[RMDB]
RNA sequence: GGGAACGACUCGAGUAGAGUCGAAAACUGCUAAUGACUGCCCAGGGAAGUUUAAGACACUAAGUCAUUAUAAAUGCUAAAGAAAAAAUUUCUUAAACCUCUACUAUUGUUUCAGUGGCAUUUAUGAUCUUAGACUAGUGUUCGCACUAGUCUAAGAAAAAGAAACAACAACAACAAC
Reactivity to 2A3 in 0.01 (KOAc 150mM, MgCl2 10mM, bicine 150mM(pH8.5), 24C), signal-to-noise 1, nucleotides 027 to 126: c010u010g110c010u050a140a000u080g080a060c040u080g000c000c010c010a000g110g000g000a000a040g000u060u140u140a010a030g080a000c040a000c160u060a080a030g040u120c010a010u010u160a050u060a060a120a000u040g010c030u060a170a130a000g050a140a070a090a060a100a280u100u210u030c000u010u040a080a110a070c000c000u070c010u050a040c010u070a090u170u050g010u040u050u030c030a000g000u040g050g040c000a000u070u110u040a100u110g060a050
Reactivity to DMS in 0.01 (KOAc 150mM, MgCl2 10mM, bicine 150mM(pH8.5), 24C), signal-to-noise 2, nucleotides 027 to 126: c090u000g010c090u040a130a100u000g000a120c020u010g010c040c080c070a090g020g000g020a090a060g000u000u020u020a020a010g020a110c300a090c150u010a070a120g000u010c010a010u000u000a040u000a050a020a010u000g000c030u010a030a110a080g020a010a040a020a220a060a170u040u010u000c020u010u020a060a030a080c060c060u020c050u010a140c040u000a060u010u000g010u010u010u010c050a020g010u020g010g010c000a020u000u000u000a050u000g000a110